[RMDB]
RNA sequence: GGGAACGACUCGAGUAGAGUCGAAAAGAUGUCAUUUGGUAAGGCUAUAUCAGGUGGCACUACAGGUACUAUGUCGCAUCAUGGUGCUUGUGAACUCGUGGCUUGAUGCGACAAGUUAUGAGUGUUCUAUGUUACUAUAGCCUUAGUGGUAUAGAAACGAGUCGUGAAUGUUCGCAUUCACGAUUCGAAAAGAAACAACAACAACAAC
Reactivity to 2A3 in 0.01 (KOAc 150mM, MgCl2 10mM, bicine 150mM(pH8.5), 24C), signal-to-noise 9, nucleotides 027 to 156: g100a040u050g020u040c020a030u020u050u100g070g010u050a010a010g020g000c020u020a010u000a010u110c020a010g010g040u040g030g020c020a010c020u190a110c020a070g120g060u100a030c020u090a130u110g010u010c010g000c020a010u010c010a010u070g160g060u070g170c020u110u100g070u090g130a130a080c030u020c070g010u020g050g020c010u010u020g000a010u020g010c000g000a010c000a000a000g010u010u050a110u060g080a040g050u060g040u060u020c030u040a060u030g030u020u040a020c020u010a010u010a010g000c000c000u000u000a000g010u010g020g000u040a030u020a050g040a010a060a020
Reactivity to DMS in 0.01 (KOAc 150mM, MgCl2 10mM, bicine 150mM(pH8.5), 24C), signal-to-noise 5, nucleotides 027 to 156: g010a070u000g010u000c010a060u000u000u000g020g030u000a010a030g010g010c020u000a050u000a020u000c030a050g010g030u000g010g010c010a030c030u000a080c050a070g020g010u010a040c050u000a070u000g020u000c100g010c100a080u010c010a050u000g020g020u000g010c030u010u000g020u000g010a080a090c050u000c060g040u000g020g020c050u000u000g000a080u000g020c090g010a090c050a020a050g020u000u000a060u000g010a120g020u030g010u000u000c040u000a040u000g010u000u000a050c050u000a020u000a030g010c020c020u000u000a020g020u000g010g010u000a010u000a050g010a060a100a300